This 177-nucleotide RNA was probed chemically with 2A3 and DMS.

RNA sequence: GGGAACGACUCGAGUAGAGUCGAAAAGGCCCGUCGUAAUUCGAGCGGGUCAAAAGGGAAACUGGUUAAUAUUCCAGUGCCACCGUACAUUGAAAGUCGACGCCUCGGAGCAGCUUGAGCCGGGCAUACAUGCUUGACCAUUCGUGGUCAAGCAUGUAAAAGAAACAACAACAACAAC
Reactivity to 2A3 in 0.01 (KOAc 150mM, MgCl2 10mM, bicine 150mM(pH8.5), 24C), signal-to-noise 2, nucleotides 027 to 126: g000g000c000c010c000g020u000c000g010u040a140a300u270u090c060g000a040g100c000g000g000g040u000c000a020a020a020a000g090g000g000a020a100a000c030u030g000g040u090u080a120a010u060a200u240u000c010c000a000g000u000g140c020c000a000c000c030g020u070a080c050a130u030u300g040a110a110a010g170u060c010g000a090c050g000c010c000u150c010g050g030a150g000c110a050g120c110u000u050g000a010g050c130c000g010g000g000c000a000u000
Reactivity to DMS in 0.01 (KOAc 150mM, MgCl2 10mM, bicine 150mM(pH8.5), 24C), signal-to-noise 1, nucleotides 027 to 126: g080g000c080c000c010g030u000c020g000u010a240a210u000u060c000g010a080g000c000g000g000g030u010c000a040a070a100a220g000g000g000a120a120a070c000u000g000g000u000u000a300a130u000a300u070u000c000c000a000g000u000g000c130c000a130c000c010g000u000a230c180a240u000u030g000a020a120a040g030u000c010g090a230c230g000c080c000u000c020g030g000a160g030c010a030g000c140u000u010g000a130g070c000c010g000g000g000c020a260u010
For 2A3 the reverse transcriptase was SuperScript II with manganese. DMS (dimethyl sulfate) methylates the pairing face of unpaired adenines and cytosines.